[RMDB]
RNA sequence: GGGAACGACUCGAGUAGAGUCGAAAACUGUCAAGAACAUCACCAGAUAUUAUUUCUUUUUUCUCCUUCUUGAUCGCUGGGGUGGCUUUUUCAGUAGGUGGGUCUUUCUCUUAUGUUAGCAGUCCUGACAGUUUGGUGAAUUCGUUCACCAAACUGUAAAAGAAACAACAACAACAAC
Reactivity to DMS in 0.01 (KOAc 150mM, MgCl2 10mM, bicine 150mM(pH8.5), 24C), signal-to-noise 1, nucleotides 027 to 126: c060u000g000u000c060a060a090g000a050a130c060a050u000c060a070c080c050a030g010a090u000a040u010u020a090u000u010u000c000u010u000u000u000u020u000c050u010c020c030u000u000c050u000u000g000a030u010c120g010c050u000g000g000g000g020u000g010g020c060u010u010u000u000u020c080a040g020u000a050g020g040u010g000g000g000u000c040u000u000u000c030u000c050u010u010a050u000g000u000u010a080g010c070a070g000u000c010c030u000g020
Reactivity to 2A3 in 0.01 (KOAc 150mM, MgCl2 10mM, bicine 150mM(pH8.5), 24C), signal-to-noise 1, nucleotides 027 to 126: c020u040g020u050c030a060a060g020a120a070c000a070u070c020a070c040c020a060g140a110u050a040u300u050a090u060u220u150c100u060u030u090u060u040u060c020u040c010c000u090u010c020u080u080g070a070u120c030g000c030u020g050g000g070g020u050g060g040c000u140u160u000u130u120c040a020g000u030a040g060g000u020g010g000g040u010c020u000u100u030c010u060c000u020u140a100u130g000u010u010a040g110c040a000g000u000c000c000u020g040

The record gives the reactivity of an RNA of 177 nucleotides to DMS and 2A3. For DMS, 1,322 sequencing reads were counted. The reactions ran in a buffer of 150 mM KOAc, 10 mM MgCl2 and 150 mM bicine (pH 8.5), at 24 C. For 2A3, 663 sequencing reads were counted. For DMS the reverse transcriptase was MarathonRT.